[RMDB]
RNA sequence: GGGAACGACUCGAGUAGAGUCGAAAAGAUUGAGCCAACCACAAGUGGACCCAUGUUAACUUUGGAACGUGGGAAAGCGAAUGAAUUAGCUGAUCAGAUAAAUUGUUUGAAUGCAACAGAUAUACGUGUUCACGGUGGAGUCGGAACGGGCAAGUCACAUCGAAACAGCAUUCGUGCUGUUUCGAUGAAAAGAAACAACAACAACAAC
Reactivity to 2A3 in 0.01 (KOAc 150mM, MgCl2 10mM, bicine 150mM(pH8.5), 24C), signal-to-noise 2, nucleotides 027 to 156: g020a030u070u100g080a010g010c020c000a050a030c000c060a040c000a080a080g020u000g000g000a000c000c000c000a010u030g010u060u130a240a100c150u100u100u190g170g010a020a010c000g000u000g000g000g000a010a010a010g010c020g040a000a060u090g000a060a050u190u070a040g000c050u060g000a070u000c030a060g100a180u070a060a240a010u070u080g100u160u080u170g200a120a070u110g020c060a030a060c040a100g110a020u020a010u020a150c080g010u020g020u110u110c100a030c040g040g000u020g000g000a030g000u020c000g010g030a040a030c020g000g050g000c020a100a000g030u090c060a000